[RMDB]
RNA sequence: GGGAACGACUCGAGUAGAGUCGAAAAGCAGUUCCGAAAAGGUCACUGCGAACACUUGACUACCGGUCGGGCCAGUCUUGUGGAUUGGACGGACUACCUCCGGUCGGGCCGGUAGGACGUCCGAAAAGGCAACCAGCUGGUUCGCCAGUUGGUUGCCAAAAGAAACAACAACAACAAC
Reactivity to 2A3 in 0.01 (KOAc 150mM, MgCl2 10mM, bicine 150mM(pH8.5), 24C), signal-to-noise 5, nucleotides 027 to 126: g000c000a010g000u000u020c010c000g050a140a150a010a010g030g020u100c110a010c030u000g000c000g010a040a020c050a010c030u060u140g060a000c010u010a000c010c010g060g080u060c080g050g010g020c000c010a030g040u060c040u100u150g050u070g060g120a150u050u160g020g020a010c000g010g000a000c000u020a020c010c030u050c020c020g130g080u080c090g090g020g000c050c040g000g000u000a000g000g040a010c020g040u010c000c000g000a030a040a000a010
Reactivity to DMS in 0.01 (KOAc 150mM, MgCl2 10mM, bicine 150mM(pH8.5), 24C), signal-to-noise 3, nucleotides 027 to 126: g010c020a020g010u000u030c010c020g030a160a100a120a150g000g000u020c110a020c000u000g000c000g000a070a110c100a090c050u010u000g000a170c000u000a040c030c010g000g020u020c010g000g000g010c010c030a080g000u030c050u000u000g010u020g000g020a220u000u000g050g010a030c000g010g000a040c000u000a030c040c040u010c120c020g000g030u060c100g020g000g010c070c120g000g020u000a020g030g000a050c060g020u000c000c000g010a030a030a150a050